[RMDB]
RNA sequence: GGGAACGACUCGAGUAGAGUCGAAAAGACACACCCUUCGCGCGUCCUGGGGCGUGCCAGUCGAUGACGAGGAAAAUCGUAUCGAUUGAAAUCUGCGUCCCGGGGCCGAUUGGGAGGAUACCGGAGACGCAGGCAACAGGUUCGCCUGUUGCCUGCGAAAAGAAACAACAACAACAAC
Reactivity to DMS in 0.01 (KOAc 150mM, MgCl2 10mM, bicine 150mM(pH8.5), 24C), signal-to-noise 1, nucleotides 027 to 126: g000a100c140a110c070a090c050c000c000u000u000c080g020c150g030c120g000u000c000c000u000g000g040g000g020c000g030u000g000c260c000a000g000u020c000g030a050u000g000a000c020g000a030g000g020a090a080a140a160u000c000g000u020a030u000c010g000a030u000u000g030a030a220a060u020c170u010g020c000g000u000c000c000c000g050g000g030g000c010c020g000a020u080u000g000g010g000a070g010g000a120u010a140c040c050g020g000a150g020a140

Conditions: 150 mM KOAc, 10 mM MgCl2 and 150 mM bicine (pH 8.5), 24 C.
An RNA of 177 nucleotides, treated with DMS and read out base by base.
Reactivities are given for positions 27 through 126.
For DMS, 703 sequencing reads were counted.